[RMDB]
RNA sequence: GGGAACGACUCGAGUAGAGUCGAAAACUGAUCUUAUUUUUUCUUGAUUGAAAUAGCAUAUUUCAAUUCACACAAAAAAUAGGAUUAGUCUGCCCAUUUUUCACUUAUACAUCAUUCAGCCAUUAUGAACUUACCUAGUGUUCGCACUAGGUAAGUUAAAAGAAACAACAACAACAAC
Reactivity to 2A3 in 0.01 (KOAc 150mM, MgCl2 10mM, bicine 150mM(pH8.5), 24C), signal-to-noise 9, nucleotides 027 to 126: c000u010g000a000u000c010u000u000a000u000u010u010u000u010u010c050u070u090g010a010u000u000g010a000a010a020u120a100g180c130a110u100a040u240u010u000c000a010a010u140u110c010a040c010a010c040a040a000a000a000a000a000u000a000g010g000a000u000u000a000g000u000c030u030g030c000c000c000a010u080u060u010u030u050c030a020c020u050u050a050u060a150c030a040u120c010a050u050u070c050a060g080c030c010a090u130u110a140u300g090
Reactivity to DMS in 0.01 (KOAc 150mM, MgCl2 10mM, bicine 150mM(pH8.5), 24C), signal-to-noise 4, nucleotides 027 to 126: c010u000g000a000u000c000u000u000a000u010u000u010u010u000u000c080u020u010g000a010u000u000g010a000a010a010u010a160g020c250a160u010a060u000u000u000c010a000a000u030u020c050a020c230a050c160a010a000a010a000a000a000u000a010g000g000a010u010u000a000g000u000c030u000g010c020c000c000a140u010u020u020u010u010c060a050c070u000u010a070u020a090c040a060u000c040a030u000u000c070a100g020c050c050a070u000u000a040u030g020
An RNA of 177 nucleotides, treated with 2A3 and DMS and read out base by base. Source: RMDB libraries RFM100 and RFMREP, as collected in RNAgym. 2A3 adducts were read by reverse transcription with SuperScript II with manganese. Reactivities are given for positions 27 through 126. The RNA was probed in 150 mM KOAc, 10 mM MgCl2 and 150 mM bicine (pH 8.5) at 24 C.